[RMDB]
RNA sequence: GGGAACGACUCGAGUAGAGUCGAAAAGGAUAGCGUGCGCUACCGGAUGGCGGGUAACUUAGGAAGCGUUUCUUGAGCUUCCCUGGGAUGAGCGUUUGGGAGAGCUGAUUCUGCAGCCCAGAGAGUAUAUUUAUUCUCGAUUCGUCGAGAAUAAAUAAAAAGAAACAACAACAACAAC
Reactivity to 2A3 in 0.01 (KOAc 150mM, MgCl2 10mM, bicine 150mM(pH8.5), 24C), signal-to-noise 9, nucleotides 027 to 126: g050g010a090u050a040g050c060g050u130g050c110g030c040u030a050c020c010g030g020a090u070g060g030c080g010g020g030u060a090a060c040u080u100a030g020g030a030a000g020c020g050u050u150u060c060u100u170g050a020g000c010u030u020c010c000c010u010g020g010g030a090u100g030a030g030c040g030u050u110u100g040g010g000a110g000a020g040c020u030g020a100u110u020c010u090g040c020a010g020c000c000c010a010g010a000g000a000g060u070a040
Reactivity to DMS in 0.01 (KOAc 150mM, MgCl2 10mM, bicine 150mM(pH8.5), 24C), signal-to-noise 9, nucleotides 027 to 126: g010g010a060u010a030g010c050g020u020g020c100g010c030u000a050c030c030g000g000a070u010g000g010c090g010g000g010u010a040a080c090u010u020a100g010g000a030a030g010c050g010u020u020u030c120u020u020g010a190g000c010u000u000c010c000c080u000g000g000g000a090u030g000a100g000c040g010u010u000u020g010g000g010a090g000a110g000c030u000g010a100u010u010c050u010g010c060a110g010c020c010c010a080g000a110g000a100g010u020a130
This 177-nucleotide RNA was probed chemically with 2A3 and DMS. Reactivities are rounded to 0.1 and cut off at 0 and 3. The data come from the RNA Mapping Database (RMDB), libraries RFM100 and RFMREP. The reactions ran in a buffer of 150 mM KOAc, 10 mM MgCl2 and 150 mM bicine (pH 8.5), at 24 C.